[RMDB]
RNA sequence: GGGAACGACUCGAGUAGAGUCGAAAAGAUAUGGAUCCCACGCGAGCGCGAAACGUUGUAUCGGAAACGAUAUUGACGGAGCUCGGGAUCCUAAGUCAAAACACUUAUUAGUUCGCUAAUAAGUGAACUACUAAAAAGAGUUCGCUCUUUUUAGUAGAAAAGAAACAACAACAACAAC
Reactivity to DMS in 0.01 (KOAc 150mM, MgCl2 10mM, bicine 150mM(pH8.5), 24C), signal-to-noise 6, nucleotides 027 to 126: g010a030u010a110u010g010g000a020u000c000c000c020a180c200g060c270g000a020g020c020g020c150g010a050a100a140c010g010u000u010g000u000a000u000c000g010g000a040a030a060c000g020a010u000a000u000u020g040a010c000g010g000a120g010c010u000c020g000g010g000a010u000c000c000u000a000a060g010u000c030a080a070a110a200c000a010c000u000u000a010u000u000a010g000u000u010c200g010c000u000a000a000u010a010a010g010u000g000a050a130
Reactivity to 2A3 in 0.01 (KOAc 150mM, MgCl2 10mM, bicine 150mM(pH8.5), 24C), signal-to-noise 1, nucleotides 027 to 126: g000a000u030a010u050g000g000a000u010c020c040c020a010c130g300c130g020a010g020c050g000c070g150a210a120a030c000g010u000u010g010u000a010u010c000g000g010a000a020a010c000g000a000u000a000u010u120g000a000c000g030g040a040g020c010u020c020g000g000g000a010u010c000c000u010a050a000g020u010c020a030a030a100a130c010a000c000u010u000a000u000u000a020g030u040u070c290g020c150u000a000a000u000a010a010g000u000g000a020a030